Annotation
An RNA of 177 nucleotides, treated with DMS and read out base by base. DMS adducts were read by reverse transcription with MarathonRT. The reactions ran in a buffer of 150 mM KOAc, 10 mM MgCl2 and 150 mM bicine (pH 8.5), at 24 C. For DMS, 640 sequencing reads were counted.
RNA sequence: GGGAACGACUCGAGUAGAGUCGAAAAGAGCUGAAGGCAGAGCUGCUGCCUCUCCUGCGCGCUGAGCUGGCCAAGGACACGCAGACCAGAGCCGCCUCCAACGAUGAAGCAGUGGUGAACAAAGUGCUAAGCACAGUGCGUUCGCGCACUGUGCUUAAAAAGAAACAACAACAACAAC
Reactivity to DMS in 0.01 (KOAc 150mM, MgCl2 10mM, bicine 150mM(pH8.5), 24C), signal-to-noise 1, nucleotides 027 to 126: g010a150g080c100u010g010a070a080g000g040c070a050g010a120g020c130u000g000c010u000g020c020c030u000c050u000c030c010u000g030c060g040c100g020c040u010g020a080g030c070u000g000g000c010c080a100a080g060g010a050c040a040c170g020c050a040g000a050c060c010a060g000a080g040c040c050g000c120c010u000c050c050a030a040c070g000a050u010g000a030a180g000c020a030g010u010g000g050u000g000a060a110c070a050a090a150g040u000g010c150